[RMDB]
RNA sequence: GGGAACGACUCGAGUAGAGUCGAAAAAGAUUGUCCAGAGAGGCAGGCAAGGUCAGAAAUUAAUAAUGUAAUAAUAUGAUGGAUACUGUCCAUUUUCUGAUACCUACCUGCAUUCUCUUUGGAAUGCUAAAUAAACCCCAUUCGUGGGGUUUAUUUAAAAAGAAACAACAACAACAAC
Reactivity to 2A3 in 0.01 (KOAc 150mM, MgCl2 10mM, bicine 150mM(pH8.5), 24C), signal-to-noise 5, nucleotides 027 to 126: a000g130a110u160u160g010u020c000c000a010g000a000g000a000g000g000c010a000g010g020c050a090a000g000g000u010c000a000g030a050a040a010u170u090a040a160u180a140a080u150g030u060a090a090u140a240a080u190a250u250g050a000u030g010g010a010u050a240c090u290g050u030c000c000a000u040u010u000u000c000u000g000a020u010a050c010c000u000a010c000c000u000g000c000a000u030u000c000u000c000u000u000u010g000g010a020a040u050g020c010
Reactivity to DMS in 0.01 (KOAc 150mM, MgCl2 10mM, bicine 150mM(pH8.5), 24C), signal-to-noise 5, nucleotides 027 to 126: a090g000a130u010u020g010u000c000c000a020g010a020g010a010g000g000c000a000g000g010c010a020a000g010g000u000c000a010g000a020a050a060u010u020a070a080u040a080a130u030g000u040a090a100u030a110a080u010a060u020g010a030u000g000g010a020u010a080c290u050g000u000c000c010a010u000u010u000u000c000u000g000a050u010a030c030c010u000a220c010c000u000g000c010a130u040u050c000u000c000u000u000u000g010g010a030a020u010g000c130